[RMDB]
RNA sequence: GGGAACGACUCGAGUAGAGUCGAAAAGUUGCCGACGAACCUUCCAACCUUCCAAACGUCGUUUUCGACAACCUUCCAACCUUCCAAUCUACUCGAGAGCAGGAGGAGGAGGAGGAGGAGGAAUUAACUCAUUACGUUAAUUCGUUAACGUAAUGAGAAAAGAAACAACAACAACAAC
Reactivity to 2A3 in 0.01 (KOAc 150mM, MgCl2 10mM, bicine 150mM(pH8.5), 24C), signal-to-noise 4, nucleotides 027 to 126: g070u070u070g130c030c010g010a060c030g020a070a090c010c010u050u040c030c030a120a100c050c010u090u010c030c000a080a100a080c050g020u010c010g010u060u030u050u110c020g010a030c010a080a050c010c010u100u000c030c040a120a120c020c020u080u060c020c010a060a110u010c000u040a040c010u020c040g060a040g020a020g060c040a030g000g050a040g020g020a060g000g020a060g030g040a040g010g040a040g010g040a030g020g070a040a070u160u080a090a040
Reactivity to DMS in 0.01 (KOAc 150mM, MgCl2 10mM, bicine 150mM(pH8.5), 24C), signal-to-noise 7, nucleotides 027 to 126: g010u000u000g010c080c030g010a090c090g010a100a100c060c040u000u000c020c030a100a120c060c030u000u000c030c040a070a110a160c130g010u010c020g000u000u000u000u010c020g010a060c040a110a140c060c050u000u010c020c020a090a080c050c060u000u000c030c050a120a230u000c010u000a030c050u000c040g000a030g010a150g020c150a080g010g000a070g000g010a170g010g010a110g000g020a100g000g000a100g010g000a140g000g020a250a070u000u010a050a110

An RNA of 177 nucleotides, treated with 2A3 and DMS and read out base by base. The DMS profile rests on 7,806 reads. 2A3 adducts were read by reverse transcription with SuperScript II with manganese. For 2A3, 15,177 sequencing reads were counted. DMS adducts were read by reverse transcription with MarathonRT.